RNA sequence: GGGAACGACUCGAGUAGAGUCGAAAAGAUAUGGAAAGUAGAAUGACGAUAAGCAGCGUUCGGAAACGAACGGCUGCUUUUGACGUCACUACUUUCCUAAGUCAAAACCCGCAGUUCGCUGCGGGAACAUGUUGUAGGACUUCGGUCCUACAACAUGAAAAGAAACAACAACAACAAC
Reactivity to DMS in 0.01 (KOAc 150mM, MgCl2 10mM, bicine 150mM(pH8.5), 24C), signal-to-noise 2, nucleotides 027 to 126: g020a020u010a230u000g000g000a010a000a020g010u000a000g010a180a160u010g000a020c000g010a140u000a020a010g020c010a000g010c010g020u000u000c010g030g010a030a040a100c000g020a020a010c020g020g020c000u000g010c000u000u000u000u010g000a220c070g000u000c000a060c000u010a000c010u000u000u000c000c000u000a000a070g010u010c020a170a110a110a140c010c000c000g010c010a020g010u010u010c300g020c000u000g020c000g000g000g020a020a070
Reactivity to 2A3 in 0.01 (KOAc 150mM, MgCl2 10mM, bicine 150mM(pH8.5), 24C), signal-to-noise 2, nucleotides 027 to 126: g000a000u020a000u080g000g000a000a060a000g010u030a010g060a300a300u240g030a010c030g080a180u050a300a000g000c000a000g000c000g020u000u020c000g000g000a030a030a000c010g000a000a010c010g060g050c010u010g000c000u030u060u000u010g010a010c020g000u000c000a010c020u000a010c000u000u000u000c000c000u020a000a010g010u030c010a000a020a110a300c000c020c000g000c000a010g000u060u300c300g000c190u000g020c010g000g000g000a010a000